[RMDB]
RNA sequence: GGGAACGACUCGAGUAGAGUCGAAAAGUGUCCAUCAUUGAGUGUGACAUGAACGUGGACUUUGAUGCUCCCCUGGGCUACAAAGAACCCGAAAGACAAGUCCAGCAUGAGGAGUCGACAGAAGGUGCUGAUCUUAUCUUUUCGAAGAUAAGAUCAGAAAAGAAACAACAACAACAAC
Reactivity to DMS in 0.01 (KOAc 150mM, MgCl2 10mM, bicine 150mM(pH8.5), 24C), signal-to-noise 9, nucleotides 027 to 126: g020u000g010u000c010c000a030u000c050a190u010u010g020a140g030u000g010u010g000a050c010a020u000g010a090a120c170g010u000g010g010a080c020u000u000u000g010a160u010g010c060u000c010c030c040c060u010g010g010g010c030u000a190c150a090a100a130g000a070a120c030c020c010g010a050a060a090g010a100c160a060a060g010u000c040c020a040g010c110a070u000g000a150g010g010a050g010u000c030g010a080c070a080g000a080a060g010g000u010g020
Reactivity to 2A3 in 0.01 (KOAc 150mM, MgCl2 10mM, bicine 150mM(pH8.5), 24C), signal-to-noise 7, nucleotides 027 to 126: g010u010g000u010c020c000a030u040c040a100u110u300g080a130g150u060g010u150g030a010c010a030u050g040a070a020c070g050u100g010g030a030c000u020u040u080g100a110u150g030c000u030c000c020c000c000u030g000g000g010c010u080a050c080a050a160a030g010a050a050c020c020c030g050a070a040a000g080a030c040a070a000g000u000c010c000a000g010c030a050u090g030a050g060g010a010g020u050c040g040a020c030a060g120a070a010g080g040u130g050